An RNA of 177 nucleotides, treated with DMS and 2A3 and read out base by base. Values cover nucleotides 27 to 126. It was measured as part of the RMDB library OK1LIB.
[RMDB]
RNA sequence: GGGAACGACUCGAGUAGAGUCGAAAAUCACAAAGCGGAUUUAGCUCGGUUGGGAGAGGUCCAGACCGAAGAUCUGGUUGUCCUGUGCUCGAGGCACAGAAUUCGCACCAUAAACAACGGGAGAUUCAUAUGCGACGAGUUUCGACUCGUCGCAUAUAAAAGAAACAACAACAACAAC
Reactivity to DMS in 0.01 (KOAc 150mM, MgCl2 10mM, bicine 150mM(pH8.5), 24C), signal-to-noise 1, nucleotides 027 to 126: u010c040a120c300a090a100a110g070c000g000g020a050u000u110u000a070g000c000u000c010g000g040u000u030g000g000g000a060g000a020g030g000u060c000c050a030g010a010c030c190g010a240a090g000a100u000c000u000g000g000u000u000g020u040c180c050u000g000u050g000c000u140c210g030a060g030g030c040a010c100a030g000a010a030u000u000c080g000c010a050c240c040a110u000a240a010a050c120a010a040c090g010g000g000a040g000a050u000u040c140
Reactivity to 2A3 in 0.01 (KOAc 150mM, MgCl2 10mM, bicine 150mM(pH8.5), 24C), signal-to-noise 1, nucleotides 027 to 126: u090c090a070c110a060a140a000g010c000g010g000a010u000u000u000a020g050c030u000c030g000g000u160u070g000g020g000a040g030a000g020g120u090c000c000a010g000a010c060c070g300a180a000g000a190u000c030u050g000g160u020u000g100u040c000c010u080g100u180g110c080u080c210g000a070g030g000c000a000c000a050g030a000a000u000u010c050g000c000a110c000c000a070u230a070a030a000c000a000a000c030g000g030g000a030g000a080u090u100c000